RNA sequence: GGGAACGACUCGAGUAGAGUCGAAAAAGACGUGUACGCACGUCACACCGUGGCGGCGGUGUAAAACAAACAUUAAGCCGCCAGCGUCCCGGAACAAGGCAUUUUCCGAUUCUCCGGGGUUUGCAAAAAAACUGAACUUGGUUCGCCAAGUUCAGAACGCUUUAAAGACGUUCGCGUCUUUAAAGCGAAAAGAAACAACAACAACAAC
Reactivity to 2A3 in 0.01 (KOAc 150mM, MgCl2 10mM, bicine 150mM(pH8.5), 24C), signal-to-noise 1, nucleotides 027 to 156: a000g010a000c030g000u000g030u060a030c270g020c090a010c000g020u010c010a000c000a000c000c020g060u050g000g000c000g000g000c010g000g050u040g010u090a060a050a030a050c080a070a110a010c020a050u080u100a120a040g020c010c010g030c000c000a000g030c020g010u010c000c000c000g000g000a070a060c100a090a050g050g000c070a080u140u130u080u050c010c020g050a090u150u000c050u010c040c020g000g000g000g040u060u150u250g000c000a060a000a000a000a060a000a000c020u000g020a000a000c000u000u000g000g000u040u000c050g050c080c000a010a000g000u000u020c000a000g000a030a020